[RMDB]
RNA sequence: GGGAACGACUCGAGUAGAGUCGAAAACCGUAGGUCCUGAAACAGAGCAUCGAUCUAUACUCAGUACUUACAUUCGAAAGAGUGUAAGGAACCGUAUAGGGAGCUCUGUAUGUAGGGACCUAAACGGAAAAGUCACCCAACUUCGGUUGGGUGACAACAAAUCUUUAAGAUUCGUCUUAAAGAUUUGAAAAGAAACAACAACAACAAC
Reactivity to 2A3 in 0.01 (KOAc 150mM, MgCl2 10mM, bicine 150mM(pH8.5), 24C), signal-to-noise 2, nucleotides 027 to 156: c000c000g000u000a000g010g010u000c010c010u020g000a050a020a000c000a000g000a000g010c020a180u300c030g050a040u030c000u000a000u000a000c000u000c000a010g010u000a000c000u000u000a000c000a000u000u000c010g070a110a090a100g000a020g000u000g000u000a000a000g000g000a000a000c000c010g010u020a000u000a000g020g000g000a020g000c000u010c010u000g000u000a000u010g010u010a010g000g010g000a000c000c000u000a000a000a000c010g070g000a140a080a030a070g010u030c020a000c010c010c000a010a010c010u030u060c220g110g000u010u000g000g000g000u010g000a000c010a000a000
Reactivity to DMS in 0.01 (KOAc 150mM, MgCl2 10mM, bicine 150mM(pH8.5), 24C), signal-to-noise 2, nucleotides 027 to 156: c020c010g060u000a020g010g010u000c000c010u020g010a300a130a090c000a000g020a020g010c010a260u010c130g000a080u000c010u010a020u000a010c000u000c020a180g010u000a120c010u000u010a000c000a010u010u020c010g000a230a090a260g000a050g010u000g000u000a010a000g030g010a090a070c250c300g030u020a020u000a010g000g000g020a020g010c010u000c010u000g030u000a000u010g010u000a300g000g010g030a020c000c000u010a000a050a070c020g010g010a050a050a130a170g000u020c000a010c000c060c000a030a020c020u000u000c280g040g030u010u010g000g010g010u000g000a000c000a080a090